Chemical mapping of a 177-nucleotide RNA with 2A3 and DMS.
Conditions: 150 mM KOAc, 10 mM MgCl2 and 150 mM bicine (pH 8.5), 24 C.

RNA sequence: GGGAACGACUCGAGUAGAGUCGAAAAAUCAGGCGCUUUUUAGCAAUGAAGACAAACCGACUUGUGGCAUUGUUCUGGGACGGCGACAGUGAGACGUUUCCAGCCACAAACGCGGGUAGCGUGCUAGAGUUCAUUCCUUGUUCGCAAGGAAUGAACUAAAAGAAACAACAACAACAAC
Reactivity to 2A3 in 0.01 (KOAc 150mM, MgCl2 10mM, bicine 150mM(pH8.5), 24C), signal-to-noise 2, nucleotides 027 to 126: a000u090c020a020g060g000c000g040c100u100u150u050u080u210a030g010c050a040a150u260g080a120a100g130a100c030a050a210a020c010c010g030a040c040u010u020g010u030g010g000c050a110u060u220g080u240u100c080u080g000g000g020a010c010g020g020c000g030a050c050a120g130u140g210a110g030a010c000g000u040u030u010c020c020a030g010c020c000a020c000a020a030a000c120g000c000g000g010g050u060a030g010c010g020u050g080c010u070a050g010
Reactivity to DMS in 0.01 (KOAc 150mM, MgCl2 10mM, bicine 150mM(pH8.5), 24C), signal-to-noise 3, nucleotides 027 to 126: a070u000c080a130g030g040c090g020c040u010u010u010u000u000a030g000c080a090a070u010g000a110a120g000a130c140a040a130a180c060c010g000a090c080u000u010g010u000g020g020c100a140u000u000g000u000u030c230u010g000g000g000a030c020g010g000c020g000a180c120a160g000u030g020a190g000a050c020g010u000u010u000c000c000a050g020c020c010a010c030a000a000a040c170g000c010g000g000g010u000a050g010c020g010u000g000c030u010a110g010